[RMDB]
RNA sequence: GGGAACGACUCGAGUAGAGUCGAAAAGGGGUCCGAAACGGAGCUAAGACAGCUCCUGAACUACAGCUGAAGCCUCCACGGCUGCAGGAGCAAUGACGGCUCCGUUCGGACGGAGGCACCCAAAAGGACGGCUACAAGGUUCGCCUUGUAGCCGUCCACCAUUAACUCGUUUCGACGAGUUAAUGGUAAAAGAAACAACAACAACAAC
Reactivity to 2A3 in 0.01 (KOAc 150mM, MgCl2 10mM, bicine 150mM(pH8.5), 24C), signal-to-noise 1, nucleotides 027 to 156: g060g010g040g000u000c000c000g000a010a020a000c030g010g000a010g000c010u080a270a020g190a110c020a040g010c040u020c000c000u180g000a040a040c060u100a130c040a000g000c010u000g000a040a010g020c000c000u000c010c000a040c060g010g000c000u010g000c000a000g000g010a010g010c040a030a300u280g070a140c180g000g000c000u000c000c010g000u000u000c010g000g000a000c010g000g000a000g000g000c000a010c030c000c010a020a020a010a000g040g000a000c000g000g000c010u160a000c000a010a030g140g010u020u080c180g120c020c000u010u000g000u000a000g000c020c000g000u000c000c000
Reactivity to DMS in 0.01 (KOAc 150mM, MgCl2 10mM, bicine 150mM(pH8.5), 24C), signal-to-noise 1, nucleotides 027 to 156: g000g020g000g020u000c020c030g000a040a040a070c040g010g000a060g050c000u020a050a190g020a260c070a110g040c100u010c030c020u000g000a070a130c050u030a300c040a010g000c000u000g000a050a180g010c010c000u000c000c000a300c000g000g030c000u000g020c020a020g020g010a020g030c000a220a110u000g030a050c040g000g030c000u000c000c000g040u010u000c000g000g000a040c060g000g040a050g000g040c040a060c000c000c000a050a070a080a100g020g010a030c030g000g000c010u000a020c000a030a030g000g010u000u000c300g000c000c000u010u010g050u000a010g000c040c000g020u000c000c000

The record gives the reactivity of an RNA of 207 nucleotides to 2A3 and DMS. The RNA was probed in 150 mM KOAc, 10 mM MgCl2 and 150 mM bicine (pH 8.5) at 24 C. 2A3 adducts were read by reverse transcription with SuperScript II with manganese. DMS adducts were read by reverse transcription with MarathonRT.